[RMDB]
RNA sequence: GGGAACGACUCGAGUAGAGUCGAAAAUCUAUCUUCGGAUAGAACUAUAACCUUUGUGUACACGAAGUGGUGGGAGAAAUCCACGCCCAUUGGGCGUGAAGAUUUCGAAGAACACCAUGGAGUGUACACUCUGGUGGUCGUGUAGCUUCGGCUACAACAAAGGGCAUUCGUUCGCGAAUGCCCUUUGAAAAGAAACAACAACAACAAC
Reactivity to DMS in 0.01 (KOAc 150mM, MgCl2 10mM, bicine 150mM(pH8.5), 24C), signal-to-noise 1, nucleotides 027 to 156: u010c020u000a060u000c000u000u010c290g030g000a040u010a010g000a040a140c060u000a100u040a120a110c020c000u020u010u000g010u000g040u000a040c050a010c000g050a300a300g010u000g010g040u030g020g000g020a230g060a010a000a040u000c030c010a040c010g000c000c000c000a260u000u000g050g030g000c010g000u040g020a040a210g020a030u000u000u030c000g010a120a130g000a140a190c030a000c000c010a010u010g020g010a300g050u000g000u000a000c010a000c020u000c030u010g000g010u000g000g010u000c040g020u000g010u020a000g000c000u010u000c220g050g010c000u000a050c000a030a300
Reactivity to 2A3 in 0.01 (KOAc 150mM, MgCl2 10mM, bicine 150mM(pH8.5), 24C), signal-to-noise 1, nucleotides 027 to 156: u000c000u000a000u000c000u030u030c290g110g010a000u000a050g020a020a080c040u110a090u100a300a020c010c000u010u010u010g010u000g020u000a000c000a000c000g010a070a030g020u000g000g000u000g000g010g000a000g000a020a000a000u010c000c000a000c010g000c000c000c020a190u160u300g060g000g000c000g000u010g000a030a120g010a000u020u010u010c000g000a010a000g000a010a000c000a000c000c010a000u020g020g030a000g010u000g010u000a000c000a010c000u000c000u030g060g020u010g000g050u090c070g070u040g030u100a000g010c000u050u050c260g170g030c000u020a000c010a010a030